[RMDB]
RNA sequence: GGGAACGACUCGAGUAGAGUCGAAAAAAGGCAAUCUAGGGUUUAGGUGCAAAAUAUUGGGGCUGCCUAGGCUUUUAUCUUAACUAUGCAGGGCUUGUAUUUUGCAAGUUAAUUGGACUUUAAUUGGAGGAGAUACUUAGUUCGCUAAGUAUCUCCUAAAAGAAACAACAACAACAAC
Reactivity to DMS in 0.01 (KOAc 150mM, MgCl2 10mM, bicine 150mM(pH8.5), 24C), signal-to-noise 1, nucleotides 027 to 126: a060a110g010g000c030a050a030u000c120u000a030g020g020g010u010u000u010a030g000g020u010g010c030a020a020a030a070u000a030u010u010g030g000g010g010c020u010g000c010c060u000a030g020g020c160u030u020u020u000a060u010c170u010u000a060a070c010u000a050u000g010c000a010g000g000g030c020u000u000g010u000a020u000u000u000u010g000c010a020a050g000u010u010a040a080u010u000g000g000a070c030u010u000u000a030a100u000u000g010g030
Structure probing data (DMS) for a 177-nucleotide construct. The reactions ran in a buffer of 150 mM KOAc, 10 mM MgCl2 and 150 mM bicine (pH 8.5), at 24 C.